[RMDB]
RNA sequence: GGGAACGACUCGAGUAGAGUCGAAAAUAUAUUCGGAGGUGGGCGAUGAGCACAAGGCUGUUGUUAAUCAUAGCGUUUGUUUCAACUAUCCCAUUGUUCAGCUCACAGAAGAUGACUUUAACUGAGAGUACGACUAGGUUUUCGAACCUAGUCGUACAAAAGAAACAACAACAACAAC
Reactivity to DMS in 0.01 (KOAc 150mM, MgCl2 10mM, bicine 150mM(pH8.5), 24C), signal-to-noise 2, nucleotides 027 to 126: u010a090u000a080u000u030c020g000g060a300g000g000u000g010g010g040c020g060a150u020g000a040g000c070a010c260a120a080g000g000c050u000g000u030u000g010u000u000a050a050u100c060a080u000a060g010c080g000u040u010u000g000u000u000u030c000a000a110c080u000a130u030c020c010c020a200u010u030g010u000u000c020a010g000c010u000c050a070c050a080g030a210a090g000a050u020g000a090c220u000u000u000a110a150c040u000g000a040g000a300
Reactivity to 2A3 in 0.01 (KOAc 150mM, MgCl2 10mM, bicine 150mM(pH8.5), 24C), signal-to-noise 3, nucleotides 027 to 126: u130a010u020a060u070u080c030g000g010a090g020g020u000g000g080g000c080g160a290u040g000a030g000c030a040c020a060a060g030g000c060u000g010u050u000g050u020u100a060a020u140c060a040u080a050g130c130g130u080u080u020g060u000u030u070c040a060a060c010u100a090u100c000c020c060a010u000u100g000u020u010c000a000g000c000u030c000a040c000a010g100a070a000g030a010u070g040a030c030u140u190u190a300a150c100u120g090a170g000a010

Background:
The record gives the reactivity of an RNA of 177 nucleotides to DMS and 2A3. For 2A3 the reverse transcriptase was SuperScript II with manganese. The RNA was probed in 150 mM KOAc, 10 mM MgCl2 and 150 mM bicine (pH 8.5) at 24 C. The 2A3 profile rests on 1,773 reads. It was measured as part of the RMDB library OK1LIB.